[RMDB]
Structure probing data (2A3) for a 207-nucleotide construct.
RNA sequence: GGGAACGACUCGAGUAGAGUCGAAAAUCUAGGGUUCCGCAUGUCAAUUGACAUGGACUGGUCCGAGAGAAAACGCAUACGCGUAAAUAGAAGCGCGUAUGCACACGGAGGGAAAAAAGCCCGGGAGAAUGGGAUUAUUAGUUCGCUAAUAAUCCAACAAUGACGUUUUCUUCGGAAAACGUCAUUGAAAAGAAACAACAACAACAAC
Reactivity to 2A3 in 0.01 (KOAc 150mM, MgCl2 10mM, bicine 150mM(pH8.5), 24C), signal-to-noise 2, nucleotides 027 to 156: u030c000u040a040g000g010g000u020u000c020c000g000c000a000u000g000u020c050a180a300u300u300g000a010c000a000u000g000g040a080c020u090g000g000u000c000c020g000a000g000a000g010a010a070a010a000c070g020c000a000u010a000c000g010c000g040u080a010a290a070u210a130g180a230a080g000c000g000c000g000u000a000u000g030c000a000c000a000c000g060g020a010g010g000g000a110a240a000a010a060a140g000c040c050c030g000g070g030a040g030a050a080u280g150g000g000a000u000u000a000u000u000a000g010u020u010c160g010c080u010a000a020u000a000a000u010c010c000a000a010
Reactivities are rounded to 0.1 and cut off at 0 and 3. The data come from the RNA Mapping Database (RMDB), library M2RFPK.